[RMDB]
RNA sequence: GGGAACGACUCGAGUAGAGUCGAAAAUGAAUGAGUGAUCUGGUUUUCUCCAGGCAGAUGACAGGACGCUAACCGGAUUCUCAAUGAUGUAGGUCACGCCCAGGGCAUCGCCAAUAUUCGCAGCAAUCCGUGCGGUUGCAACAGCCUUCUCCUGGAAGUGCAUUAGGAACUUCGGUUCCUAAUGCACAAAAGAAACAACAACAACAAC
Reactivity to 2A3 in 0.01 (KOAc 150mM, MgCl2 10mM, bicine 150mM(pH8.5), 24C), signal-to-noise 1, nucleotides 027 to 156: u180g040a030a010u050g000a000g020u120g040a040u000c010u040g030g070u000u080u080u040c060u000c010c000a050g060g000c050a060g090a190u110g010a040c040a080g020g000a010c050g000c020u040a000a000c010c000g000g030a030u050u040c020u000c020a020a050u080g040a010u050g050u210a080g030g080u050c000a000c130g100c000c000c020a000g010g060g000c000a080u040c000g010c040c000a040a000u120a150u120u150c040g000c070a070g010c030a060a000u020c040c010g230u160g060c110g050g000u030u030g000c020a100a030c010a050g020c000c050u000u040c040u050c060c020u080g060g030a100a070
The record gives the reactivity of an RNA of 207 nucleotides to 2A3. Values are in units of 0.01, from 0 to 300, in steps of 10.